Conditions: 150 mM KOAc, 10 mM MgCl2 and 150 mM bicine (pH 8.5), 24 C.
This 177-nucleotide RNA was probed chemically with DMS and 2A3.
For DMS the reverse transcriptase was MarathonRT.
Reactivities are rounded to 0.1 and cut off at 0 and 3.
Values cover nucleotides 27 to 126.
RNA sequence: GGGAACGACUCGAGUAGAGUCGAAAAGAUAUGGAACGCUCUGGAGGGAGAUUGGAUCGGAAACGAUCUUCGACGAUCUCCAGAGGCGUUCCUAAGUCAAAGGCCCAAAACUUCGGUUUUGGGCCAACGAUAGUACCACCUUCGGGUGGUACUAUCGAAAAGAAACAACAACAACAAC
Reactivity to DMS in 0.01 (KOAc 150mM, MgCl2 10mM, bicine 150mM(pH8.5), 24C), signal-to-noise 2, nucleotides 027 to 126: g000a030u000a300u010g000g000a020a000c000g000c000u020c000u010g000g010a050g020g000g000a300g000a110u000u000g000g000a020u000c000g000g000a160a080a190c000g000a010u000c000u000u000c050g010a080c040g000a300u010c000u000c000c010a030g010a000g000g010c000g010u000u000c000c000u010a010a070g000u010c040a070a120a120g000g020c000c000c000a020a020a020a030c000u010u000c230g040g010u040u010u000u040g020g000g000c000c000a000a010
Reactivity to 2A3 in 0.01 (KOAc 150mM, MgCl2 10mM, bicine 150mM(pH8.5), 24C), signal-to-noise 1, nucleotides 027 to 126: g000a000u080a000u170g010g000a000a000c000g010c000u010c000u000g000g000a000g030g040g000a030g020a060u130u240g040g010a000u010c000g000g000a040a090a040c030g000a010u000c090u040u040c020g170a180c000g000a010u040c000u000c000c000a000g010a000g000g020c000g010u000u010c000c000u000a010a000g020u000c050a030a080a200g010g000c000c020c010a000a000a010a010c030u030u120c270g100g000u090u000u000u000g000g100g000c030c000a010a000